Chemical mapping of a 177-nucleotide RNA with 2A3 and DMS. The RNA was probed in 150 mM KOAc, 10 mM MgCl2 and 150 mM bicine (pH 8.5) at 24 C. High DMS reactivity at an A or C suggests that its Watson-Crick edge is free. As a SHAPE reagent, 2A3 marks flexible, mostly unpaired nucleotides at the ribose 2'-OH.
RNA sequence: GGGAACGACUCGAGUAGAGUCGAAAACGUAAUAUGUUCGCAUAUUACGAAAUCUCCAAUCAUGGCUAUCCAGGAUCCUCCGAUGAAUUAAAGCCCUCGGUAAAAGGAGCGGGUUCGCCCGCUCCAAUCAUAGAAUUCUGUUCGCAGAAUUCUAUGAAAAAGAAACAACAACAACAAC
Reactivity to 2A3 in 0.01 (KOAc 150mM, MgCl2 10mM, bicine 150mM(pH8.5), 24C), signal-to-noise 1, nucleotides 027 to 126: c010g000u000a000a000u000a000u000g020u000u040c110g000c030a000u000a000u010u010a000c000g010a040a040a000u110c020u000c040c000a050a030u090c030a080u160g040g010c010u090a040u030c040c060a040g110g070a100u060c020c000u120c010c020g080a140u030g040a090a180u180u200a250a070a020g050c050c020c010u010c080g040g040u090a070a050a080a130g030g000a000g000c000g000g000g030u040u000c170g060c030c070c010g080c010u000c000c000a000a000
Reactivity to DMS in 0.01 (KOAc 150mM, MgCl2 10mM, bicine 150mM(pH8.5), 24C), signal-to-noise 2, nucleotides 027 to 126: c010g030u000a010a000u000a000u000g010u010u030c150g020c010a000u000a000u000u000a000c010g010a060a070a100u010c060u010c020c130a080a090u000c080a060u000g000g010c070u010a070u000c030c060a060g000g010a070u000c040c070u000c050c000g000a080u010g000a080a070u030u000a070a140a180g000c030c010c030u000c070g000g000u010a040a080a150a120g010g010a000g060c000g000g010g010u010u000c150g010c000c000c000g010c000u000c000c020a010a030